The record gives the reactivity of an RNA of 177 nucleotides to DMS and 2A3.
As a SHAPE reagent, 2A3 marks flexible, mostly unpaired nucleotides at the ribose 2'-OH.
The 2A3 profile rests on 4,302 reads.
For DMS, 4,440 sequencing reads were counted.
The RNA was probed in 150 mM KOAc, 10 mM MgCl2 and 150 mM bicine (pH 8.5) at 24 C.
RNA sequence: GGGAACGACUCGAGUAGAGUCGAAAAGAAGGGAAAGGAGACCCAUGGACAGUCUCCAGAGGUUCCUAAGGCCUCGCUCGCGCCUGCGGGGAGGCAGAAUGUCCCGGUUGUCCAUGAAAGAAGAAGACCAUUAUACCCGUUUCGACGGGUAUAAUGGAAAAGAAACAACAACAACAAC
Reactivity to DMS in 0.01 (KOAc 150mM, MgCl2 10mM, bicine 150mM(pH8.5), 24C), signal-to-noise 3, nucleotides 027 to 126: g020a200a080g000g000g010a050a120a110g010g010a010g010a010c050c080c150a020u030g000g000a020c000a080g020u020c000u000c000c020a090g020a170g000g010u010u030c000c030u000a060a250g010g010c000c010u010c010g040c020u000c010g010c010g000c300c220u010g040c050g000g000g000g010a000g010g000c020a000g000a100a050u010g030u010c000c010c030g020g000u010u010g000u010c000c030a010u000g000a110a110a150g000a170a070g020a080a080g000a150
Reactivity to 2A3 in 0.01 (KOAc 150mM, MgCl2 10mM, bicine 150mM(pH8.5), 24C), signal-to-noise 4, nucleotides 027 to 126: g070a040a070g030g010g020a040a050a050g010g010a000g010a000c000c000c060a020u030g000g000a000c010a030g010u000c000u010c000c010a010g050a020g070g120u060u040c000c000u040a050a060g150g010c000c000u020c020g160c040u020c000g020c010g110c070c270u270g020c000g000g000g010g000a000g000g010c010a000g030a040a060u070g030u050c000c000c010g030g000u030u020g000u000c010c010a020u030g100a070a090a060g180a040a030g070a030a010g080a040